[RMDB]
RNA sequence: GGGAACGACUCGAGUAGAGUCGAAAAUACGGCUUUUAAGGAAGCGCUGCAGUGCACAUUGUCUGCAGUGUGAGGAGACAAAUGGGCGCGCGUCACUCUUCCACCCCUAACGCUCGCUGGGCGGAAGCAUAUAGCGGAGUUUCGACUCCGCUAUAUGAAAAGAAACAACAACAACAAC
Reactivity to 2A3 in 0.01 (KOAc 150mM, MgCl2 10mM, bicine 150mM(pH8.5), 24C), signal-to-noise 9, nucleotides 027 to 126: u170a010c030g030g010c020u070u080u080u180a100a060g080g020a050a020g020c010g000c020u020g010c010a020g010u080g200c030a080c070a250u190u280g030u030c000u030g020c020a030g020u020g020u040g050a060g050g050a040g000a030c040a030a110a090u120g020g020g000c010g000c010g000c010g060u050c020a020c040u030c010u050u020c020c010a060c010c010c000c010u050a120a030c030g010c030u030c020g110c080u060g000g020g000c020g020g010a030a020g030
Reactivity to DMS in 0.01 (KOAc 150mM, MgCl2 10mM, bicine 150mM(pH8.5), 24C), signal-to-noise 8, nucleotides 027 to 126: u030a090c100g010g000c010u000u010u010u020a100a130g010g000a100a150g000c050g000c040u000g010c010a040g010u040g010c050a110c200a120u030u030g020u010c010u000g030c000a050g010u020g000u020g010a150g000g010a080g000a060c080a040a050a070u010g020g000g000c020g010c030g010c060g000u000c050a070c080u010c030u000u000c010c020a110c030c010c010c050u000a050a090c080g000c020u000c050g010c100u010g010g000g010c060g010g000a050a070g000